Chemical mapping of a 177-nucleotide RNA with 2A3 and DMS. For DMS, 2,696 sequencing reads were counted. For 2A3, 1,966 sequencing reads were counted. For DMS the reverse transcriptase was MarathonRT. The RNA was probed in 150 mM KOAc, 10 mM MgCl2 and 150 mM bicine (pH 8.5) at 24 C.

RNA sequence: GGGAACGACUCGAGUAGAGUCGAAAAAUGGUUGAUGCCACUAGCAUAUCUGAUGGCAUAGCAUUAGCACCAUCAUGUAUGUUUAAAAGGGAACUAGAUCUUGGACUACUUAAAAUUCCUUUUGACACUAUUGUUUGUGCUUCGGCACAAACAAUAGAAAAGAAACAACAACAACAAC
Reactivity to 2A3 in 0.01 (KOAc 150mM, MgCl2 10mM, bicine 150mM(pH8.5), 24C), signal-to-noise 5, nucleotides 027 to 126: a000u210g030g010u070u080g050a140u180g050c020c010a040c050u050a020g000c000a000u000a010u010c000u020g020a010u000g000g020c180a160u120a060g030c010a120u180u270a050g020c070a080c050c000a000u010c010a000u100g020u030a000u010g020u000u080u120a130a190a010a040g080g010g020a010a040c020u030a070g040a180u050c030u110u110g070g030a070c030u050a060c040u230u210a020a040a120a190u060u060c000c000u060u100u020u110g030a030c010a000
Reactivity to DMS in 0.01 (KOAc 150mM, MgCl2 10mM, bicine 150mM(pH8.5), 24C), signal-to-noise 2, nucleotides 027 to 126: a090u030g020g000u060u000g000a050u010g000c000c050a080c130u010a090g040c040a000u000a020u010c150u000g000a020u000g010g000c150a130u020a090g020c040a250u020u060a140g040c020a170c020c000a000u000c060a000u010g010u000a000u000g000u000u010u040a020a000a020a020g010g060g000a020a010c000u000a080g000a110u000c030u030u020g050g010a130c050u040a000c130u050u020a040a030a060a180u000u030c020c010u000u010u020u000g000a080c190a160